[RMDB]
RNA sequence: GGGAACGACUCGAGUAGAGUCGAAAAUUCCGGGGGAAGAAGGGUGUUUUUGGACCAAACUCGUUGAAAACCAAUGCUUUUGCUGCCCUUGGAUUUCGGGGGAUGGUAGUUGUGGAUUUCUAGGGAAAGAGCAUUAAGUGUUCGCACUUAAUGCUCUAAAAGAAACAACAACAACAAC
Reactivity to 2A3 in 0.01 (KOAc 150mM, MgCl2 10mM, bicine 150mM(pH8.5), 24C), signal-to-noise 2, nucleotides 027 to 126: u140u000c000c000g000g000g000g040g030a070a020g000a070a000g050g020g010u020g090u020u090u030u040u100g090g030a010c050c000a080a000a030c090u080c050g180u050u080g060a020a020a000a000c020c000a000a010u070g040c070u090u100u100u260g010c040u030g060c010c010c020u010u010g050g000a090u010u000u120c060g020g000g000g010g000a060u080g000g060u030a130g050u000u080g000u000g040g050a170u020u010u010c010u000a010g070g090g010a020a220
Reactivity to DMS in 0.01 (KOAc 150mM, MgCl2 10mM, bicine 150mM(pH8.5), 24C), signal-to-noise 1, nucleotides 027 to 126: u010u000c000c090g070g000g010g000g000a030a030g020a010a100g020g040g000u000g000u000u110u000u000u040g000g000a040c110c000a040a000a060c030u040c110g000u050u080g000a110a000a140a090c050c090a050a040u040g010c080u000u040u000u020g000c050u000g000c130c010c190u000u000g000g000a130u000u000u000c040g020g070g010g000g000a150u000g010g010u030a030g020u000u000g000u000g000g020a130u000u000u000c010u020a140g000g060g020a160a040